[RMDB]
RNA sequence: GGGAACGACUCGAGUAGAGUCGAAAAUGCAUGCCCGCUCACCCGGGACGCGGCGGACGGCUCAGGACGACGGUUGCACCCCCCGCGGCGGUCCCUGCUAGCCGGACACCGCUGGCAACCCGGCGCCCUCUUUGAACGAGUUCGCUCGUUCAAAGAGAAAAGAAACAACAACAACAAC
Reactivity to 2A3 in 0.01 (KOAc 150mM, MgCl2 10mM, bicine 150mM(pH8.5), 24C), signal-to-noise 2, nucleotides 027 to 126: u140g020c070a040u110g030c010c010c020g000c040u130c050a050c010c010c000g000g010g000a000c020g020c000g020g000c010g000g030a060c010g000g000c020u020c040a010g000g050a050c130g000a010c040g190g020u030u030g000c030a300c010c000c000c000c000c000g000c010g020g010c040g070g000u020c000c010c000u010g040c060u060a020g010c010c000g000g030a040c060a040c030c010g000c010u020g130g000c000a010a040c010c000c000g000g000c000g030c000c020
Reactivity to DMS in 0.01 (KOAc 150mM, MgCl2 10mM, bicine 150mM(pH8.5), 24C), signal-to-noise 2, nucleotides 027 to 126: u040g010c090a150u090g010c000c030c000g000c060u000c050a100c150c000c020g020g000g000a110c300g000c020g000g010c030g010g000a100c010g000g020c000u000c000a020g010g010a110c200g010a000c020g000g020u000u000g030c010a100c000c000c000c020c040c000g010c000g000g020c000g030g040u010c000c030c040u050g000c270u050a040g010c010c010g000g000a110c130a040c020c000g000c010u020g000g040c030a110a260c010c000c020g000g000c140g000c060c040

This 177-nucleotide RNA was probed chemically with 2A3 and DMS. The RNA was probed in 150 mM KOAc, 10 mM MgCl2 and 150 mM bicine (pH 8.5) at 24 C. It was measured as part of the RMDB library RFM100. Reactivities are rounded to 0.1 and cut off at 0 and 3.